An RNA of 207 nucleotides, treated with DMS and 2A3 and read out base by base. 2A3 adducts were read by reverse transcription with SuperScript II with manganese. DMS (dimethyl sulfate) methylates the pairing face of unpaired adenines and cytosines.
RNA sequence: GGGAACGACUCGAGUAGAGUCGAAAAUGGAAAGUGUCACAGAGAUAUCAUGAGAAUGCUGGCUGAGUUCACGGGACUCAGGUCCUAAGGUUGACAAAGAAAAAGGACCUUUGUCACAGCUACUUCUCUGGAUUUCUGAAAAGGUGCUGGGAUGUCAUACCUCUCUUUUCUUCGGAAAAGAGAGGUAAAAAGAAACAACAACAACAAC
Reactivity to DMS in 0.01 (KOAc 150mM, MgCl2 10mM, bicine 150mM(pH8.5), 24C), signal-to-noise 1, nucleotides 027 to 156: u000g010g010a090a100a110g020u010g000u000c030a290c080a090g010a030g020a050u000a060u000c030a060u000g000a040g030a030a020u000g020c110u010g010g020c000u000g000a130g020u000u000c110a070c140g020g030g000a030c050u000c140a150g030g010u010c010c000u010a100a120g020g000u000u000g020a120c030a010a030a080g000a020a040a140a130a180g000g000a070c070c000u000u000u000g020u010c000a120c040a040g000c000u000a010c050u000u000c000u000c000u000g000g010a080u000u000u000c000u010g000a050a080a060a040g010g010u000g000c020u000g030g000g000a070u000g010u000c040a140
Reactivity to 2A3 in 0.01 (KOAc 150mM, MgCl2 10mM, bicine 150mM(pH8.5), 24C), signal-to-noise 2, nucleotides 027 to 156: u100g030g010a100a040a040g030u040g010u040c040a020c010a060g010a020g010a010u050a100u230c050a100u240g010a010g010a010a070u180g010c080u000g110g000c000u010g010a030g100u110u070c060a030c050g050g060g000a000c020u020c100a040g040g070u040c010c010u090a150a050g060g040u060u100g040a020c020a020a060a020g170a030a120a050a050a050g110g040a060c020c000u030u020u000g040u010c040a020c000a040g000c000u010a010c010u000u000c000u010c000u020g010g000a010u000u020u000c010u010g030a030a050a010a010g020g000u020g050c010u020g000g000g050a010u070g040u160c110a000